Conditions: 150 mM KOAc, 10 mM MgCl2 and 150 mM bicine (pH 8.5), 24 C. Chemical mapping of a 207-nucleotide RNA with DMS and 2A3. The 2A3 profile rests on 6,033 reads.
RNA sequence: GGGAACGACUCGAGUAGAGUCGAAAAGCAGUAUCACGUUAGGCGAGGCUCCUAUACAAACACAGGUUGCUGAUCUGACGACGUCGAGAGACGCCCAAGAUUAGGACAGGAUAUAUCGAACCAAGGUGAACCUGUCCAGGGUUCGCCCUGGACAGAAUCAGAACUAUAGGUUCGCCUAUAGUUCUGAAAAAGAAACAACAACAACAAC
Reactivity to DMS in 0.01 (KOAc 150mM, MgCl2 10mM, bicine 150mM(pH8.5), 24C), signal-to-noise 3, nucleotides 027 to 156: g010c040a160g000u000a070u000c060a010c030g000u000u000a100g000g000c050g020a170g000g020c040u000c010c010u000a090u000a130c100a090a090a150c050a110c100a140g050g010u010u010g010c020u000g010a060u000c010u010g020a160c050g010a030c020g030u000c020g010a300g000a300g010a020c000g040c000c030c040a210a060g020a070u000u000a000g000g020a080c030a070g040g030a110u000a060u010a040u010c070g000a050a060c030c010a060a120g010g030u010g000a040a090c110c000u000g010u000c030c010a040g000g030g050u000u010c270g020c010c030c010u000g010g000a030c020a030g000a040a110
Reactivity to 2A3 in 0.01 (KOAc 150mM, MgCl2 10mM, bicine 150mM(pH8.5), 24C), signal-to-noise 4, nucleotides 027 to 156: g030c040a010g040u120a060u130c040a010c100g040u070u080a040g010g020c040g020a040g020g040c020u010c030c020u110a100u080a210c130a050a160a010c090a010c020a090g140g010u080u130g090c010u010g010a020u000c000u030g020a030c010g010a010c000g000u010c010g000a010g000a010g000a090c000g000c010c000c000a020a000g020a010u030u050a010g030g000a020c040a040g030g000a020u050a020u030a030u200c050g030a050a020c010c020a040a020g070g000u030g020a030a030c010c010u010g010u000c000c000a000g020g010g010u030u060c150g090c030c000c000u000g000g010a000c000a000g000a010a030